[RMDB]
RNA sequence: GGGAACGACUCGAGUAGAGUCGAAAAGAGUGGAAGGCCGACAGCACGUCGUGCCGCUCGUACAUCGCCACGAACACCUCCCGGAUGAUCCGGUACAGGGCCGCGCUGUCGGCGGCGUGGGUGCCGACCGUAUAGGGAAAUUCGUUUCCCUAUACGGAAAAGAAACAACAACAACAAC
Reactivity to DMS in 0.01 (KOAc 150mM, MgCl2 10mM, bicine 150mM(pH8.5), 24C), signal-to-noise 9, nucleotides 027 to 126: g000a060g020u010g000g010a110a070g000g020c000c000g000a010c030a070g020c050a170c100g000u000c020g030u020g000c160c010g010c080u010c090g010u020a060c140a070u030c060g010c120c030a050c050g000a080a130c160a130c030c000u010c110c000c000g010g000a190u030g010a090u020c060c010g000g000u010a070c290a090g000g000g020c300c020g010c040g000c020u010g010u000c010g010g020c010g000g010c030g000u020g010g010g010u000g010c030c020g010a220
Reactivity to 2A3 in 0.01 (KOAc 150mM, MgCl2 10mM, bicine 150mM(pH8.5), 24C), signal-to-noise 9, nucleotides 027 to 126: g090a020g020u110g040g080a140a080g100g010c000c000g000a010c010a020g060c070a030c100g070u050c010g060u140g030c040c000g010c000u020c020g050u050a050c020a140u100c050g030c040c020a040c040g040a080a010c030a060c050c010u070c020c010c000g000g000a160u280g040a070u140c020c000g010g000u040a050c050a060g040g040g000c040c010g000c000g010c020u040g020u080c030g010g010c010g000g000c030g030u110g030g050g040u080g030c010c010g030a030

Conditions: 150 mM KOAc, 10 mM MgCl2 and 150 mM bicine (pH 8.5), 24 C. This 177-nucleotide RNA was probed chemically with DMS and 2A3. For DMS the reverse transcriptase was MarathonRT. High 2A3 reactivity points to a flexible backbone, as in loops and unpaired stretches. Source: RMDB library OK1LIB, as collected in RNAgym. For 2A3, 21,419 sequencing reads were counted.